[RMDB]
RNA sequence: GGGAACGACUCGAGUAGAGUCGAAAAGAAGAUCUAGUUUUGUCAUUAACAUGCUUUGAGAUGAUCAAUAACUUCCGAGAUACAGGGAAAAUCAGCUUCACCGAUUUGGCUCUUUUAACCCCGGAUCUGAUAACAUCCCCUUCGGGGGAUGUUAUCAAAAAGAAACAACAACAACAAC
Reactivity to 2A3 in 0.01 (KOAc 150mM, MgCl2 10mM, bicine 150mM(pH8.5), 24C), signal-to-noise 3, nucleotides 027 to 126: g130a030a000g010a020u020c060u040a030g010u050u010u090u140g050u040c010a010u030u060a120a100c030a040u140g090c090u170u180u100g090a130g020a050u110g030a050u100c060a020a040u090a030a050c010u060u030c020c030g060a030g000a060u140a100c090a030g020g000g010a010a030a000a090u050c010a010g060c040u100u160c020a060c050c000g050a050u010u010u140g030g000c030u000c000u000u080u050u070a090a090c000c010c010c000g010g010a040u090c030
Reactivity to DMS in 0.01 (KOAc 150mM, MgCl2 10mM, bicine 150mM(pH8.5), 24C), signal-to-noise 2, nucleotides 027 to 126: g060a110a010g030a080u000c010u000a130g000u000u010u020u010g000u010c060a040u010u040a070a120c080a060u020g000c050u020u010u000g010a190g020a010u010g000a040u030c010a040a040u060a040a100c060u000u000c080c030g010a040g030a100u070a050c110a060g000g030g020a020a060a030a090u010c060a040g000c050u010u020c060a070c100c050g000a090u000u000u010g000g000c040u020c030u050u000u010u030a050a060c060c010c000c040g000g000a050u020c040